[RMDB]
This 207-nucleotide RNA was probed chemically with 2A3 and DMS.
The RNA was probed in 150 mM KOAc, 10 mM MgCl2 and 150 mM bicine (pH 8.5) at 24 C.
For 2A3 the reverse transcriptase was SuperScript II with manganese.
RNA sequence: GGGAACGACUCGAGUAGAGUCGAAAAAGCAUGUUAGGUUCGCAUGGUGCACUAUUGUGUUAUUAGUAACUAAGUAAGCUUACAAUCGAAAAUGUUUAACCAUAAAAGGGUAAAAUGGGGUAAGACAGAUACCCUCUGAGCUUCGGCUCAGAGGGAACAAGGAGAGCAAGUUCGCUUGCUCUCCUUGAAAAGAAACAACAACAACAAC
Reactivity to 2A3 in 0.01 (KOAc 150mM, MgCl2 10mM, bicine 150mM(pH8.5), 24C), signal-to-noise 2, nucleotides 027 to 156: a010g050c050a060u070g000u060u130a060g070g050u080u070c040g000c080a020u060g060g020u070g000c030a020c040u100a090u120u210g030u000g010u060u000a060u040u020a090g030u040a060a000c030u000a050a040g040u020a100a000g140c020u030u060a030c090a040a100u070c080g100a030a040a060a060u000g040u080u110u040a090a000c000c000a010u050a140a170a010a010g040g000g010u030a030a030a000a090u060g000g010g000g000u010a020a030g020a010c010a000g040a010u100a110c020c000c040u020c000u000g000a000g000c000u010u110c300g060g000c000u000c000a000g000a000g000g000g000a000a000
Reactivity to DMS in 0.01 (KOAc 150mM, MgCl2 10mM, bicine 150mM(pH8.5), 24C), signal-to-noise 1, nucleotides 027 to 156: a100g020c030a000u010g030u030u020a050g000g030u010u000c070g000c010a080u000g010g000u010g000c170a050c050u000a070u000u000g040u000g000u010u020a120u010u010a160g010u000a070a060c040u010a090a160g030u000a080a090g000c020u010u010a060c010a030a110u000c040g030a100a040a070a090u000g010u000u010u010a070a090c010c020a040u010a020a080a100a160g010g000g000u010a010a030a070a090u000g020g010g040g000u020a060a060g020a100c030a060g000a130u000a120c000c000c020u000c000u000g000a010g010c010u000u010c180g090g000c000u000c010a010g020a000g020g000g000a000a040
DMS adducts were read by reverse transcription with MarathonRT. The data come from the RNA Mapping Database (RMDB), library M2RFPK.